[RMDB]
RNA sequence: GGGAACGACUCGAGUAGAGUCGAAAAUUUAGUAGAGACAGGGUUUCGCCACAUGGGGCAGGCUGGUCUCGAACUUCUGACCUCAGGUGAUCUGCCCGCUUCGGUCUCCCAAAGUGCUGGGAUUACAAAGUGUCGUAUAUUUCGAUAUACGACACUUAAAAGAAACAACAACAACAAC
Reactivity to 2A3 in 0.01 (KOAc 150mM, MgCl2 10mM, bicine 150mM(pH8.5), 24C), signal-to-noise 2, nucleotides 027 to 126: u080u050u060a030g020u010a020g000a000g010a080c050a080g020g020g020u050u080u120c080g010c010c010a060c060a160u140g040g000g060g070c030a010g030g000c040u100g020g010u000c000u010c060g010a010a010c000u080u040c020u060g190a240c000c020u030c050a040g010g000u020g040a050u000c040u100g020c000c010c000g000c020u050u060c050g040g010u000c020u010c010c000c000a040a080a000g150u130g020c050u070g010g000g090a080u060u090a080c030a090
Reactivity to DMS in 0.01 (KOAc 150mM, MgCl2 10mM, bicine 150mM(pH8.5), 24C), signal-to-noise 6, nucleotides 027 to 126: u000u000u010a090g020u010a130g000a080g010a050c020a100g020g000g010u000u000u010c100g020c060c020a090c140a140u010g010g020g000g000c020a020g000g010c100u010g010g000u010c010u000c110g000a070a050c070u000u000c050u000g010a130c020c010u000c060a050g000g000u000g000a040u000c060u000g000c020c020c020g020c050u000u000c070g010g010u000c090u000c020c020c020a050a060a080g010u000g010c060u010g010g000g000a080u000u010a060c130a080